[RMDB]
RNA sequence: GGGAACGACUCGAGUAGAGUCGAAAAGAUAUGGAUCUUUAUAGACAUGAAGGUCCAUCGGAAACGAUGGUCCCUUCAACAGCUAUAUGGAUCCUAAGUCAAACCAUACAUGUUCGCAUGUAUGGAAGUAUUCCGGUAGGUUCGCCUACCGGAAUACAAAAGAAACAACAACAACAAC
Reactivity to 2A3 in 0.01 (KOAc 150mM, MgCl2 10mM, bicine 150mM(pH8.5), 24C), signal-to-noise 2, nucleotides 027 to 126: g010a010u020a020u050g000g000a000u000c000u010u040u010a040u000a020g090a040c250a300u300g000a000a010g060g000u000c000c000a000u010c000g000g000a030a010a000c030g000a000u000g030g030u130c220c040c040u020u010c030a050a090c080a070g030c000u000a000u000a010u040g030g020a000u000c000c000u010a020a000g020u010c070a120a080a060c000c000a000u010a030c000a000u020g080u110u120c300g010c250a000u020g010u020a000u020g000g030a020a080
Reactivity to DMS in 0.01 (KOAc 150mM, MgCl2 10mM, bicine 150mM(pH8.5), 24C), signal-to-noise 2, nucleotides 027 to 126: g000a020u000a090u010g000g000a000u000c000u000u000u000a040u000a020g000a030c150a300u010g010a030a000g000g000u000c000c010a010u000c000g020g000a030a010a020c000g020a010u000g010g000u000c300c060c020u000u000c000a120a040c300a140g030c000u010a010u000a000u000g000g010a000u000c000c010u000a020a080g000u010c010a180a140a300c030c000a000u010a020c010a000u010g020u000u020c300g010c020a020u000g020u000a000u000g000g010a020a050
Conditions: 150 mM KOAc, 10 mM MgCl2 and 150 mM bicine (pH 8.5), 24 C. The record gives the reactivity of an RNA of 177 nucleotides to 2A3 and DMS. For DMS the reverse transcriptase was MarathonRT.